[RMDB]
RNA sequence: GGGAACGACUCGAGUAGAGUCGAAAAUGUUUUCACAAUGUCACUCCUGUAUACCGCCGCAUAGGGUUAUCCACAAGGCAACCCGCAGCACAUCAGGGCUGCGAGGGGGAUGUGGAUGCUUUUGUGAUCACUAAUGGUCGUUCGCGACCAUUAGUGAAAAAGAAACAACAACAACAAC
Reactivity to 2A3 in 0.01 (KOAc 150mM, MgCl2 10mM, bicine 150mM(pH8.5), 24C), signal-to-noise 2, nucleotides 027 to 126: u060g000u050u020u020u040c080a060c010a030a080u070g070u080c010a020c060u050c030c000u030g010u000a090u040a080c000c070g080c040c010g030c050a030u060a040g100g000g020u040u070a010u000c000c000a050c020a060a030g180g000c020a020a040c010c010c010g000c000a000g030c000a010c000a100u260c100a110g130g050g000c020u020g000c000g000a300g000g000g000g010g010a010u070g010u010g020g010a000u010g000c000u130u100u050u050g040u010g040a030
Reactivity to DMS in 0.01 (KOAc 150mM, MgCl2 10mM, bicine 150mM(pH8.5), 24C), signal-to-noise 2, nucleotides 027 to 126: u020g000u010u000u010u010c030a040c050a070a050u000g010u000c090a080c070u010c010c000u000g010u000a120u010a070c090c050g000c060c040g030c090a070u000a080g000g000g000u000u000a010u000c010c000a000c020a050a140g020g020c120a130a120c000c000c010g010c010a020g000c000a040c050a210u020c300a140g020g020g030c000u000g010c000g000a080g010g020g000g000g000a080u000g000u000g000g000a030u000g000c070u000u010u000u000g030u000g010a160
Chemical mapping of a 177-nucleotide RNA with 2A3 and DMS. The 2A3 profile rests on 1,506 reads. DMS (dimethyl sulfate) methylates the pairing face of unpaired adenines and cytosines. For 2A3 the reverse transcriptase was SuperScript II with manganese. The data come from the RNA Mapping Database (RMDB), library OK2TST. DMS adducts were read by reverse transcription with MarathonRT. The RNA was probed in 150 mM KOAc, 10 mM MgCl2 and 150 mM bicine (pH 8.5) at 24 C.